[RMDB]
RNA sequence: GGGAACGACUCGAGUAGAGUCGAAAAAGACCUGCAGGAUCUGUCUAUCUUCAUCACCAAUGUCACCUACAACCACUCGGGCGACUACGAGUGCCACGUCUACCGCCUGCUCUUCUUCGAAAACUAAAGUAAAAUAAUCGUUCGCGAUUAUUUUACUAAAAGAAACAACAACAACAAC
Reactivity to 2A3 in 0.01 (KOAc 150mM, MgCl2 10mM, bicine 150mM(pH8.5), 24C), signal-to-noise 2, nucleotides 027 to 126: a000g030a070c010c020u030g020c040a020g050g010a060u020c010u050g030u060c020u080a050u030c020u050u020c000a060u010c000a010c020c010a040a070u100g040u040c000a020c020c020u090a060c040a080a070c030c030a020c010u000c000g080g000g000c050g130a070c050u100a020c050g010a000g020u030g020c010c010a010c010g020u000c030u050a050c010c040g070c010c000u020g070c030u000c000u050u000c000u070u050c000g140a080a170a050a030c050u120a190a120
Reactivity to DMS in 0.01 (KOAc 150mM, MgCl2 10mM, bicine 150mM(pH8.5), 24C), signal-to-noise 2, nucleotides 027 to 126: a060g000a080c070c040u000g030c070a100g000g000a040u000c060u000g020u000c050u000a070u010c040u000u000c020a050u020c090a050c070c040a050a080u000g000u000c010a020c020c030u000a070c130a060a100c090c050a040c040u000c020g000g000g010c040g020a100c130u000a080c080g010a070g010u010g020c070c060a060c090g000u000c050u000a120c070c060g010c040c020u000g020c050u000c020u000u000c020u000u000c040g010a040a060a050a100c070u010a060a050